[RMDB]
RNA sequence: GGGAACGACUCGAGUAGAGUCGAAAAUGACCUCUAUAGUGUUAAUCAAUAUUUAGUAUGAGAGGCAAUCAGAGGGCGCUAUCAUGCAAACUAGGAUUGUCUGCUCAUGCACAGAACCAACUACCGAGGUGCAGCAAAUAUUCGUAUUUGCUGCACCAAAAGAAACAACAACAACAAC
Reactivity to DMS in 0.01 (KOAc 150mM, MgCl2 10mM, bicine 150mM(pH8.5), 24C), signal-to-noise 2, nucleotides 027 to 126: u000g000a170c030c000u000c050u050a180u000a060g020u000g000u010u080a100a080u050c060a080a140u080a100u000u020u010a170g000u000a020u000g000a000g020a010g070g000c010a000a000u000c000a020g000a060g000g000g000c300g010c000u000a060u020c100a150u060g030c000a090a300a130c060u000a040g030g000a010u000u000g000u000c040u000g010c000u000c000a040u010g010c000a040c270a060g000a030a120c100c070a070a020c100u000a050c180c050g000a120
Reactivity to 2A3 in 0.01 (KOAc 150mM, MgCl2 10mM, bicine 150mM(pH8.5), 24C), signal-to-noise 5, nucleotides 027 to 126: u070g060a030c000c000u010c050u040a080u050a100g110u080g030u090u130a150a040u090c020a090a090u080a130u260u240u200a070g000u000a000u000g000a000g000a000g000g010c010a000a000u000c000a010g010a020g050g080g000c000g000c000u120a160u300c080a050u300g000c000a010a000a030c000u000a000g040g000a000u000u000g010u000c010u000g040c000u000c000a000u000g000c000a010c010a010g080a000a030c050c010a090a070c000u080a090c000c050g040a030
Background
The record gives the reactivity of an RNA of 177 nucleotides to DMS and 2A3. Values cover nucleotides 27 to 126. The DMS profile rests on 1,389 reads. DMS adducts were read by reverse transcription with MarathonRT.